[RMDB]
RNA sequence: GGGAACGACUCGAGUAGAGUCGAAAAAGAACGUUAACACACAGAAGACAAAAGCAACCCAUGCCAUGGAAGAGGAUCUUUGGUAUUUUGAACUUCUUGGCGAUUUCGCUUGUAUACGACAAACACAUAUCAGAGAUUAGACAGCUUGGUCGCGGGAAUUUAUCGUGCCUUUCGAGGCACGAUAAAUAAAAGAAACAACAACAACAAC
Reactivity to 2A3 in 0.01 (KOAc 150mM, MgCl2 10mM, bicine 150mM(pH8.5), 24C), signal-to-noise 1, nucleotides 027 to 156: a010g050a040a000c070g030u080u080a100a000c030a000c010a000c000a090g070a110a010g060a030c030a030a220a010a080g000c040a020a070c050c000c000a020u120g000c010c000a050u030g010g080a060a040g010a090g100g050a040u000c010u000u000u040g040g010u000a040u070u100u000u110g060a070a070c030u010u050c000u040u080g030g000c020g150a120u090u200u150c040g020c030u050u150g050u070a080u040a100c070g020a030c060a000a090a030c050a000c000a120u050a000u030c020a030g060a000g000a050u000u050a050g050a100c000a040g000c000u060u050g010g020u110c070g000c040g020g000g000a020

Conditions: 150 mM KOAc, 10 mM MgCl2 and 150 mM bicine (pH 8.5), 24 C. An RNA of 207 nucleotides, treated with 2A3 and read out base by base. The 2A3 profile rests on 397 reads. For 2A3 the reverse transcriptase was SuperScript II with manganese. Values are in units of 0.01, from 0 to 300, in steps of 10.